[RMDB]
RNA sequence: GGGAACGACUCGAGUAGAGUCGAAAAGGCGAUGCGAUCAGGCGGGGCGAUCGUGCGGCCGGCCGGUUCCCUCCCGGCGCCAUCCUCCCCAGCUCCCGGUGCCGUUAGGACGAGCGCGUGCUCGACACCUAUAUCAGGCAUUCGUGCCUGAUAUAGGAAAAGAAACAACAACAACAAC
Reactivity to 2A3 in 0.01 (KOAc 150mM, MgCl2 10mM, bicine 150mM(pH8.5), 24C), signal-to-noise 3, nucleotides 027 to 126: g030g010c050g090a090u090g010c020g040a050u080c040a050g100g040c040g010g020g020g000c040g000a040u030c030g020u070g060c040g070g050c020c000g000g000c020c010g040g010u050u080c030c000c000u030c020c000c000g000g000c010g000c020c020a120u090c000c000u040c000c000c000c000a020g000c030u040c000c010c010g000g020u040g000c000c010g060u050u090a050g020g040a040c020g000a010g020c070g010c070g070u080g000c010u010c020g010a030c010a040
Reactivity to DMS in 0.01 (KOAc 150mM, MgCl2 10mM, bicine 150mM(pH8.5), 24C), signal-to-noise 6, nucleotides 027 to 126: g010g010c010g010a110u010g010c040g010a050u000c040a120g010g000c070g010g000g020g020c230g000a020u000c050g020u000g020c140g010g020c030c040g000g010c040c040g000g010u000u010c010c000c010u000c170c020c000g000g000c030g030c020c050a100u010c040c010u000c030c010c000c020a120g000c070u000c020c030c030g020g020u000g000c010c030g010u000u010a070g000g010a120c040g000a050g010c020g010c200g010u000g000c020u000c020g000a150c180a150